[RMDB]
RNA sequence: GGGAACGACUCGAGUAGAGUCGAAAAACUAUUUGUUCUAUAGCAAACAAACCCGAAACACAGUAUAUAUUUGUUAUAUAUGCUUUGUGGUACACAGCUGUUAGGACAUGAGCCAUCAGGGUCCAAACGAGGUAUGCCAUUUCGAUGGCAUACCUCGAAAAGAAACAACAACAACAAC
Reactivity to 2A3 in 0.01 (KOAc 150mM, MgCl2 10mM, bicine 150mM(pH8.5), 24C), signal-to-noise 1, nucleotides 027 to 126: a000c120u160a180u040u010u080g000u040u050c010u040a130u090a040g050c030a120a000a030c000a000a060a130c000c000c050g030a080a290a000c000a000c000a000g000u000a000u000a000u000a000u000u050u010g180u300u030a050u000a000u000a000u000g000c000u040u040u030g020u130g010g000u040a080c160a000c050a040g000c010u060g000u050u030a060g000g000a000c000a000u150g000a000g020c080c000a120u020c120a040g180g040g000u000c000c000a040a040a010

Conditions: 150 mM KOAc, 10 mM MgCl2 and 150 mM bicine (pH 8.5), 24 C. This 177-nucleotide RNA was probed chemically with 2A3.